About this RNA:
Chemical mapping of a 207-nucleotide RNA with 2A3. For 2A3, 863 sequencing reads were counted. Source: RMDB library OK3TST, as collected in RNAgym. The RNA was probed in 150 mM KOAc, 10 mM MgCl2 and 150 mM bicine (pH 8.5) at 24 C. 2A3 adducts were read by reverse transcription with SuperScript II with manganese.
RNA sequence: GGGAACGACUCGAGUAGAGUCGAAAAGUGACUCGUGUAGACAUCAUGUUGAGCAAAGGAAGCAGAGGCAGCGGAGAAGUGGGGUGCACGUGUCUGUUCCUGUGACGCUGGGGAGUGGGCAAAGUGGAUGUCUGUGAUAGAGGCGAAGAAGUGACUGGUGCAAGGUGUUGUUCGCAACACCUUGCACAAAAGAAACAACAACAACAAC
Reactivity to 2A3 in 0.01 (KOAc 150mM, MgCl2 10mM, bicine 150mM(pH8.5), 24C), signal-to-noise 2, nucleotides 027 to 156: g080u020g040a020c020u000c000g000u030g070u070a030g040a090c050a080u150c020a120u180g070u100u130g030a080g010c110a130a010a060g010g090a040a020g020c020a010g030a020g080g000c020a000g040c050g040g030a100g030a120a010g010u100g000g020g000g070u040g040c010a020c070g020u050g000u000c000u030g050u060u000c020c000u030g020u040g050a040c050g000c040u020g000g000g040g000a100g000u110g000g000g000c040a070a080a020g000u050g030g050a000u030g050u000c030u060g050u010g010a020u020a090g100a010g000g050c050g000a020a010g020a110a010g080u060g070a100c090u140g020